[RMDB]
RNA sequence: GGGAACGACUCGAGUAGAGUCGAAAAGGCGUAGCCGACAACAUGCCCAGGUAGCCCAGACCUUCAAGGCUACGUUGCGUUGCGACGCACGGUCUGAUUCUUCACAACGACGUUCACCGCGUCUUCUACAACCGGCAAAGAUUCGUCUUUGCCGGAAUCUUCAGGGUAUGUUCGCAUACCCUGAAGAAAAAGAAACAACAACAACAAC
Reactivity to 2A3 in 0.01 (KOAc 150mM, MgCl2 10mM, bicine 150mM(pH8.5), 24C), signal-to-noise 2, nucleotides 027 to 156: g090g000c070g050u040a000g020c020c020g010a040c010a130a050c020a100u220g030c010c060c000a010g000g010u020a040g030c010c030c050a020g050a090c030c010u090u120c070a050a010g000g000c010u010a010c020g000u000u060g010c020g000u030u090g050c100g030a020c030g010c000a000c030g000g020u020c080u070g020a100u070u050c040u160u140c060a040c030a200a090c110g020a000c000g000u080u110c070a080c130c000g040c010g030u000c080u070u020c020u120a080c020a150a100c010c000g000g000c000a000a000a000g020a010u050u100c130g040u000c120u000u000u000g000c000c000g000g000a000a000
Reactivity to DMS in 0.01 (KOAc 150mM, MgCl2 10mM, bicine 150mM(pH8.5), 24C), signal-to-noise 2, nucleotides 027 to 156: g000g030c010g050u000a120g020c040c000g010a160c090a070a070c070a090u000g030c000c020c080a120g020g020u010a090g050c040c010c100a110g050a070c020c000u020u030c080a040a050g040g020c000u000a020c010g000u000u020g030c000g030u000u010g030c070g030a080c040g030c020a030c030g000g030u000c010u000g000a250u030u000c020u000u000c100a200c070a040a140c100g000a060c030g040u000u000c060a080c050c090g010c070g010u010c030u000u010c040u000a160c020a100a180c000c000g020g000c000a000a030a000g010a070u000u000c260g030u000c010u010u000u010g020c000c000g000g010a000a010